[RMDB]
Chemical mapping of a 177-nucleotide RNA with 2A3.

RNA sequence: GGGAACGACUCGAGUAGAGUCGAAAAAGAAUGUGUAGACACCUAGAGUGGCAUGAGAACGAACAAUUCUCUUAUAGAUCUACGCGACCUCGAGAGCAGGGUUCGGAGCCUUCCCCCGCUGCCACCAUCUCGCCCUUAGUUUCGACUAAGGGCGAGAAAAAGAAACAACAACAACAAC
Reactivity to 2A3 in 0.01 (KOAc 150mM, MgCl2 10mM, bicine 150mM(pH8.5), 24C), signal-to-noise 1, nucleotides 027 to 126: a000g070a030a080u240g000u030g010u060a000g000a070c040a070c090c010u010a010g040a030g200u040g000g060c000a020u030g000a010g060a010a110c170g050a020a000c000a200a060u040u000c000u000c000u030u020a150u010a070g030a040u030c030u040a000c010g030c060g000a240c020c030u070c080g040a010g030a040g000c080a000g000g010g050u000u120c100g010g020a030g030c000c000u000u120c000c000c000c000c000g010c110u040g000c000c000a000c000c000a040

The RNA was probed in 150 mM KOAc, 10 mM MgCl2 and 150 mM bicine (pH 8.5) at 24 C. The data come from the RNA Mapping Database (RMDB), library OK1LIB. For 2A3 the reverse transcriptase was SuperScript II with manganese.